[RMDB]
RNA sequence: GGGAACGACUCGAGUAGAGUCGAAAAAGGUCAGUUCGUAUGCUGCGGGAAAUGGCCGCCGAGGAGGUAGGGCUUACGCUUGCGUUUGUCUGUUAUAUCUUGGUGGACGAGUAGUCGCGGUUGGGACGUGUAUAAGAAGGUUCGCCUUCUUAUACACAAAAGAAACAACAACAACAAC
Reactivity to DMS in 0.01 (KOAc 150mM, MgCl2 10mM, bicine 150mM(pH8.5), 24C), signal-to-noise 5, nucleotides 027 to 126: a070g010g010u010c070a120g020u000u000c050g020u010a090u010g010c020u000g010c010g000g000g010a060a090a110u010g010g010c000c010g020c010c010g000a030g000g010a090g000g010u000a080g010g000g000c010u000u000a010c020g020c030u000u000g020c020g020u000u000u010g010u000c020u000g010u010u000a070u010a040u010c020u000u000g000g020u000g010g000a050c030g000a110g010u000a110g010u010c020g010c020g010g010u000u000g010g010g000a050c090
Reactivity to 2A3 in 0.01 (KOAc 150mM, MgCl2 10mM, bicine 150mM(pH8.5), 24C), signal-to-noise 6, nucleotides 027 to 126: a010g100g040u090c030a020g010u040u040c010g010u050a040u160g010c010u010g010c010g000g030g040a050a110a100u150g070g010c000c000g010c010c000g010a020g020g030a020g000g060u090a030g030g000g010c000u010u010a000c000g020c040u060u110g030c000g010u000u020u010g020u000c010u020g200u240u040a090u010a020u100c020u010u010g020g000u020g020g000a010c010g010a040g040u050a020g030u050c020g000c010g030g010u040u040g070g010g000a020c060